[RMDB]
RNA sequence: GGGAACGACUCGAGUAGAGUCGAAAAACGCGGAGUACACUCCGCGACAACACUUCUUUCGACCCGCUAACCGAGACCUAUGGGUCGUUAAAUUACGUCUCUAUCUUACUCACAUAACAUCGCACAAAAAACGUGGUUCGGUUCGCCGAACCACGAAGGAUAGCAAGAUGUUCGCAUCUUGCUAUCCAAAAGAAACAACAACAACAAC
Reactivity to 2A3 in 0.01 (KOAc 150mM, MgCl2 10mM, bicine 150mM(pH8.5), 24C), signal-to-noise 3, nucleotides 027 to 156: a000c010g000c010g000g000a000g030u180a090c150a140c060u000c000c000g030c010g010a010c010a100a020c020a030c040u080u080c040u080u300u130c000g000a000c000c000c000g040c200u130a030a020c050c020g000a010g000a030c000c000u040a070u240g000g000g000u000c000g000u010u020a000a060a010u130u070a010c020g030u000c010u000c010u020a100u040c060u060u160a070c030u110c080a040c010a090u170a220a010c060a150u140c090g060c100a060c100a060a080a040a030a130a020c030g010u000g000g000u010u010c010g000g050u010u030c120g050c060c000g010a000a000c010c010a000c000g000a000a020